An RNA of 177 nucleotides, treated with DMS and 2A3 and read out base by base.
The data come from the RNA Mapping Database (RMDB), library OK2TRN.
RNA sequence: GGGAACGACUCGAGUAGAGUCGAAAAUACUGCUGUGGGUAACCUGAGUCACCCCUCCCUUGGGUGUGCCUGAGACAAGUUCUAACCACAAGGAUGAGUCACAUCCUGAGAAGAACAACGCUGGAAAUCUUUACUAAGCUUUCGAGCUUAGUAAAGAAAAAGAAACAACAACAACAAC
Reactivity to DMS in 0.01 (KOAc 150mM, MgCl2 10mM, bicine 150mM(pH8.5), 24C), signal-to-noise 7, nucleotides 027 to 126: u010a100c090u010g010c040u010g020u010g010g010g020u010a200a110c040c030u000g000a090g000u020c080a250c020c000c010c020u000c050c050c030u010u000g000g010g020u000g020u000g000c030c020u000g000a110g000a100c120a060a170g010u000u000c040u000a090a170c100c050a080c130a140a030g000g000a010u000g010a230g010u010c200a130c040a010u000c000c000u000g000a160g010a080a060g000a030a040c030a070a100c150g010c050u010g020g000a060a100a110
Reactivity to 2A3 in 0.01 (KOAc 150mM, MgCl2 10mM, bicine 150mM(pH8.5), 24C), signal-to-noise 2, nucleotides 027 to 126: u070a000c010u020g090c030u040g010u120g140g040g000u050a060a070c010c000u010g030a020g050u060c070a220c020c020c010c030u040c020c040c000u010u030g040g020g010u080g040u080g050c000c000u030g010a030g030a040c050a030a050g000u040u000c010u030a060a080c030c040a060c050a090a010g000g000a000u040g020a030g190u100c060a030c000a190u030c000c000u040g020a070g020a120a010g010a020a000c020a050a030c080g000c050u020g030g040a020a190a010
2A3 is a SHAPE reagent: it acylates the 2'-hydroxyl of flexible nucleotides of all four kinds. For DMS, 6,768 sequencing reads were counted. The RNA was probed in 150 mM KOAc, 10 mM MgCl2 and 150 mM bicine (pH 8.5) at 24 C.